Chemical mapping of a 177-nucleotide RNA with DMS and 2A3. It was measured as part of the RMDB library OK1LIB. 2A3 adducts were read by reverse transcription with SuperScript II with manganese. For DMS, 4,602 sequencing reads were counted.

RNA sequence: GGGAACGACUCGAGUAGAGUCGAAAACGUUGUCAGCCAAUCGUGUCAUAUCCACUGGAUUGGGCGGAUUUAGAUACGCACAUGGGCCGAUGGAAUCGACGAAGCGACCUCCGCACAUGCUGUCAAGAGCGAGAGUAUAGUUCGCUAUACUCUCGCUAAAAGAAACAACAACAACAAC
Reactivity to DMS in 0.01 (KOAc 150mM, MgCl2 10mM, bicine 150mM(pH8.5), 24C), signal-to-noise 3, nucleotides 027 to 126: c140g000u000u010g000u020c060a080g070c020c030a050a100u010c070g000u020g020u010c030a090u020a070u000c050c010a030c010u020g010g070a110u030u000g000g000g040c090g000g010a050u010u010u040a070g030a070u020a060c040g020c160a080c060a100u010g000g000g010c090c060g020a060u030g000g000a050a080u010c060g000a100c050g000a120a130g010c010g000a060c030c020u020c020c090g000c080a100c070a110u010g010c030u010g000u010c090a050a100g010
Reactivity to 2A3 in 0.01 (KOAc 150mM, MgCl2 10mM, bicine 150mM(pH8.5), 24C), signal-to-noise 5, nucleotides 027 to 126: c060g020u020u080g060u050c040a030g020c020c030a030a110u080c050g030u050g030u060c050a080u020a040u180c030c030a050c090u110g120g030a220u090u170g070g010g000c030g010g000a010u060u040u040a130g050a080u070a040c010g000c020a020c010a100u090g020g070g010c020c020g000a040u060g010g070a060a120u050c040g070a120c060g060a050a020g060c010g090a060c010c000u000c000c000g020c000a020c000a040u100g000c020u070g070u110c060a100a050g030